[RMDB]
RNA sequence: GGGAACGACUCGAGUAGAGUCGAAAACGUGGCACUACCUGACCCGCGCGGCCCUGCAGCGCUGGGGCCUGCCGGCCGGGCCCGUCGAGCCGGGCGCGCUGCUGGACCUGCCGCUGACGCAGGCGCACACCAGCAGUGGUUUCGACCACUGCUGGUGAAAAGAAACAACAACAACAAC
Reactivity to DMS in 0.01 (KOAc 150mM, MgCl2 10mM, bicine 150mM(pH8.5), 24C), signal-to-noise 1, nucleotides 027 to 126: c120g010u000g030g010c020a040c070u010a130c080c030u000g000a100c070c030c150g020c070g070c030g020g030c010c010c000u000g020c010a060g010c010g060c060u030g050g010g030g060c030c000u000g030c180c170g030g010c070c030g010g000g030c000c000c010g000u000c130g000a130g020c210c000g020g000g030c010g000c030g030c010u000g020c020u000g020g010a110c030c000u020g010c130c040g000c060u000g030a090c170g000c040a040g010g030c090g000c120a150